[RMDB]
RNA sequence: GGGAACGACUCGAGUAGAGUCGAAAAAAAAUGGCACUGUACAAUCUCUAUCCAGGUAUGAGCUUGUUUGUGCUCUUUCUUCUACCUACUCUAUUUGUUGAGUACUUACUUUAAAUGGUCUAGGCACCAAUGACGGUCCUUUCGAGGACCGUCAUUGAAAAGAAACAACAACAACAAC
Reactivity to DMS in 0.01 (KOAc 150mM, MgCl2 10mM, bicine 150mM(pH8.5), 24C), signal-to-noise 1, nucleotides 027 to 126: a040a010a030a030u000g010g000c000a010c030u000g000u000a010c030a010a010u000c000u000c010u000a130u010c050c220a150g000g000u000a060u010g010a010g010c150u010u000g010u000u000u000g000u010g000c000u000c120u000u000u000c060u000u010c060u000a130c040c030u010a030c020u000c000u000a040u000u020u010g010u010u010g000a040g010u010a120c170u000u000a040c030u000u000u000a040a030a060u000g010g010u010c040u000a060g010g000c110a060c140
Structure probing data (DMS) for a 177-nucleotide construct.
Values are in units of 0.01, from 0 to 300, in steps of 10.
The RNA was probed in 150 mM KOAc, 10 mM MgCl2 and 150 mM bicine (pH 8.5) at 24 C.
It was measured as part of the RMDB library OK2TRN.
For DMS, 1,416 sequencing reads were counted.